[RMDB]
RNA sequence: GGGAACGACUCGAGUAGAGUCGAAAAGAUAUGGACGAGCGAUAAGCUCGUGGUCGGAAACGACCACUGGGAGCUUUUGACGCUCAAGUCCUAAGUCAAAAGCAGAUAUUCUUCGGAAUAUCUGCAAUCAAUACAGUGACUUCGGUCACUGUAUUGAAAAAGAAACAACAACAACAAC
Reactivity to 2A3 in 0.01 (KOAc 150mM, MgCl2 10mM, bicine 150mM(pH8.5), 24C), signal-to-noise 3, nucleotides 027 to 126: g030a030u050a040u070g020g000a010c010g010a010g010c030g020a060u040a170a060g010c000u000c010g000u000g000g010u000c000g000g050a070a030a030c010g010a010c040c000a000c010u110g230g100g030a010g000c000u150u110u120u160g130a070c000g000c000u010c000a000a040g000u000c010c000u010a090a010g040u030c030a050a060a070a140g000c010a000g010a000u010a000u020u030c010u050u120c300g100g020a010a010u000a000u010c000u000g000c000a000a000
Reactivity to DMS in 0.01 (KOAc 150mM, MgCl2 10mM, bicine 150mM(pH8.5), 24C), signal-to-noise 4, nucleotides 027 to 126: g000a070u000a290u010g000g020a000c020g010a000g010c010g010a120u000a020a020g030c000u010c000g020u000g010g010u000c000g000g010a070a060a180c000g010a010c000c000a000c000u010g030g040g000a010g010c010u000u000u010u000g010a180c040g000c000u000c000a060a130g010u000c000c000u000a040a120g010u000c050a090a060a120a120g010c000a000g010a010u000a000u000u000c000u000u020c240g020g010a000a010u000a010u000c000u000g000c000a010a020